This 207-nucleotide RNA was probed chemically with 2A3 and DMS.
RNA sequence: GGGAACGACUCGAGUAGAGUCGAAAAGAUGAUAGUGAUGAUUGCACAGCAUUGUGAACGUAUCUAAUACAUUCACUGAAUUGUACACUAAAAUUGGUUAGGAUGGUAAUUUUUAUGUUAAGUGUAUUUUGCCACAAUAAAAGAUUUGGAAAUCAAAAUACUGGCGAUUAUUCGUAAUCGCCAGUAUAAAAGAAACAACAACAACAAC
Reactivity to 2A3 in 0.01 (KOAc 150mM, MgCl2 10mM, bicine 150mM(pH8.5), 24C), signal-to-noise 2, nucleotides 027 to 156: g040a050u080g000a040u080a100g020u000g050a070u010g000a000u010u120g020c060a030c020a050g050c030a120u140u110g000u000g010a040a010c050g030u020a050u040c170u090a070a070u020a070c010a010u050u020c010a000c030u000g020a050a060u150u050g020u010a040c000a000c020u120a050a020a180a270u100u100g020g120u120u020a050g100g020a050u070g020g040u040a040a030u020u150u020u020u080a140u080g050u120u080a160a040g070u060g030u100a080u090u040u020u020g000c000c010a060c040a090a020u190a090a050a030a020g110a050u300u210u160g020g000a060a070a000u110c070a000a080a040
Reactivity to DMS in 0.01 (KOAc 150mM, MgCl2 10mM, bicine 150mM(pH8.5), 24C), signal-to-noise 1, nucleotides 027 to 156: g060a100u010g000a090u000a040g030u000g000a130u000g030a040u010u010g030c120a090c060a070g080c030a140u000u000g000u000g020a010a030c030g020u000a040u010c130u010a130a080u000a030c040a040u000u000c030a030c020u030g000a070a080u000u000g040u010a100c000a040c050u000a000a060a050a170u010u010g020g010u000u000a100g000g020a060u040g000g020u000a030a030u020u000u000u010u000a050u030g010u000u000a120a210g040u000g020u010a040u000u000u010u020g020c020c040a080c070a100a150u000a030a050a150a150g000a150u000u000u000g000g000a060a110a060u000c030a010a050a130

Values cover nucleotides 27 to 156. The RNA was probed in 150 mM KOAc, 10 mM MgCl2 and 150 mM bicine (pH 8.5) at 24 C.